RNA sequence: GGGAACGACUCGAGUAGAGUCGAAAAGAUAUGGAUGUGUGCUUUUGACGUACUUCAUCGGAAACGAUGUACGAUAAGCAUUACAUCCUAAGUCAAACGGCCAUAACGGUUCGCCGUUAUGGCCGAAGUAUAUGUGAAUGUUCGCAUUCACAUAUACAAAAGAAACAACAACAACAAC
Reactivity to 2A3 in 0.01 (KOAc 150mM, MgCl2 10mM, bicine 150mM(pH8.5), 24C), signal-to-noise 9, nucleotides 027 to 126: g020a010u050a020u100g000g000a000u000g010u010g000u010g020c020u140u220u210u300g200a080c020g000u010a020c030u130u230c060a050u030c030g040g020a060a050a010c020g000a010u030g010u010a000c010g080a150u060a220a000g000c000a000u070u120a000c000a000u000c000c000u010a050a000g030u000c020a040a060a130c030g010g000c000c000a010u000a000a000c010g020g060u070u090c300g040c110c000g000u000u000a000u010g000g010c000c000g000a000a000
Reactivity to DMS in 0.01 (KOAc 150mM, MgCl2 10mM, bicine 150mM(pH8.5), 24C), signal-to-noise 9, nucleotides 027 to 126: g000a030u000a300u010g000g000a010u000g020u000g010u000g000c000u000u000u000u000g020a250c130g000u000a010c110u010u010c180a040u000c020g010g000a100a080a140c030g020a010u000g010u000a010c000g010a130u000a030a010g000c000a010u000u010a010c010a010u000c000c000u000a010a100g000u000c020a080a130a280c030g000g000c000c000a010u000a000a010c000g000g010u000u010c240g010c000c000g000u000u000a000u000g000g000c000c000g000a000a030